About this RNA: The record gives the reactivity of an RNA of 177 nucleotides to DMS and 2A3. 2A3 adducts were read by reverse transcription with SuperScript II with manganese. The reactions ran in a buffer of 150 mM KOAc, 10 mM MgCl2 and 150 mM bicine (pH 8.5), at 24 C.

RNA sequence: GGGAACGACUCGAGUAGAGUCGAAAAUAUUAAGAGCACUGUGUCUCCCAACAUUUGAAUCUGCUGGAAGAAUUAUAUCAUACUCACCGUUGGGAAGCCUUUCCAGUUCCACCUCGUGCUUGCGGAGCGAUGGGUGCGUGUUCGCACGCACCCAUCGAAAAGAAACAACAACAACAAC
Reactivity to DMS in 0.01 (KOAc 150mM, MgCl2 10mM, bicine 150mM(pH8.5), 24C), signal-to-noise 1, nucleotides 027 to 126: u000a010u000u000a040a160g040a080g000c000a030c050u000g000u000g000u000c060u000c000c010c000a050a070c100a130u000u150u000g020a070a140u000c090u000g000c050u000g000g010a040a010g000a080a050u030u000a110u000a130u090c030a000u000a070c060u000c080a030c060c070g000u020u000g000g020g000a110a040g050c050c020u060u000u050c010c020a050g000u000u000c030c000a060c120c110u000c100g000u020g070c000u000u000g010c050g000g070a110g110
Reactivity to 2A3 in 0.01 (KOAc 150mM, MgCl2 10mM, bicine 150mM(pH8.5), 24C), signal-to-noise 2, nucleotides 027 to 126: u300a080u110u180a060a010g030a000g050c020a020c090u010g030u010g010u180c000u020c000c030c000a000a060c040a110u110u120u070g060a110a090u000c010u030g100c080u070g060g040a080a030g040a030a020u300u050a170u030a120u060c070a040u060a140c040u040c010a090c060c060g010u050u000g080g000g010a100a000g050c010c030u030u090u010c030c010a070g000u030u070c000c040a100c000c020u030c040g010u020g030c000u010u040g040c030g020g040a100g010